Conditions: 150 mM KOAc, 10 mM MgCl2 and 150 mM bicine (pH 8.5), 24 C. An RNA of 170 nucleotides, treated with 2A3 and DMS and read out base by base. For DMS the reverse transcriptase was MarathonRT. Reactivities are rounded to 0.1 and cut off at 0 and 3. Source: RMDB library 15KLIB, as collected in RNAgym.
RNA sequence: GGGAACGACUCGAGUAGAGUCGAAAAUGAGCCAAGUCCGAGCGAAGGGUCCGCGUGGGGAGGAAACGCAACCCGAGAGUGAGAUGAACGACAAGGGGCGAAGAUCCUCGGAAGGAAUUCUCCCAAGAAGGAGUAGUGUUCGCACUACUCAAAAGAAACAACAACAACAAC
Reactivity to 2A3 in 0.01 (KOAc 150mM, MgCl2 10mM, bicine 150mM(pH8.5), 24C), signal-to-noise 9, nucleotides 027 to 129: u090g000a000g010c000c000a040a030g060u000c010c010g010a010g010c020g020a040a030g040g010g010u030c020c020g050c030g030u110g010g010g010g000a030g010g000a020a030a010c060g010c040a050a050c010c000c010g020a030g000a010g040u100g020a060g010a070u110g050a070a020c050g050a000c050a060a080g010g000g010g000c050g020a030a020g020a050u040c010c010u020c020g010g020a030a010g020g010a010a010u100u030c040u020c010c010c010a020a030g080a040a020g120
Reactivity to DMS in 0.01 (KOAc 150mM, MgCl2 10mM, bicine 150mM(pH8.5), 24C), signal-to-noise 9, nucleotides 027 to 129: u050g010a030g020c070c020a070a130g020u030c010c010g000a050g030c050g020a060a020g000g020g000u030c020c030g050c070g020u010g020g000g020g030a030g010g030a010a030a030c100g000c080a130a080c030c000c010g010a070g000a050g050u050g010a050g030a080u040g020a110a080c090g010a060c120a060a100g000g020g020g030c130g030a020a020g010a070u030c020c010u000c070g020g010a040a030g000g000a030a060u020u010c040u030c000c040c040a060a050g010a110a090g030